[RMDB]
RNA sequence: GGGAACGACUCGAGUAGAGUCGAAAAUUUCAUUAUACCAUAGAAACCUAAAGAUUAGGUUAUUUUCGUUCUUCAUGUUAUGGAGUGUGAGUGAUGAGGAGCUUGCUCUUUUAAGCUCAUAUUACGUGUUCACUGUACUUUUCGAAGUACAGUGAACAAAAGAAACAACAACAACAAC
Reactivity to 2A3 in 0.01 (KOAc 150mM, MgCl2 10mM, bicine 150mM(pH8.5), 24C), signal-to-noise 4, nucleotides 027 to 126: u000u030u010c010a010u020u200a060u090a150c010c010a020u040a070g170a020a070a000c010c000u040a160a040a080g230a250u170u070a030g020g000u030u030a090u060u120u030u030c030g030u040u060c000u030u030c020a060u100g060u230u220a100u110g030g030a020g030u040g000u000g000a000g000u040g030a100u100g020a030g020g000a000g010c030u080u150g050c000u030c000u060u010u000u040a030a000g000c000u000c030a000u000a020u010u080a100c070g050u030
Reactivity to DMS in 0.01 (KOAc 150mM, MgCl2 10mM, bicine 150mM(pH8.5), 24C), signal-to-noise 2, nucleotides 027 to 126: u000u030u010c090a100u020u010a120u010a220c020c030a160u010a060g000a130a060a050c010c000u000a030a160a110g020a150u000u000a020g000g000u000u000a090u010u040u000u000c040g000u010u000c030u000u010c060a070u050g020u050u000a020u000g000g000a090g000u030g010u000g000a020g000u000g000a170u000g010a000g030g000a020g000c060u000u010g000c040u000c010u000u000u000u000a100a300g000c000u020c000a010u000a020u000u000a060c160g030u000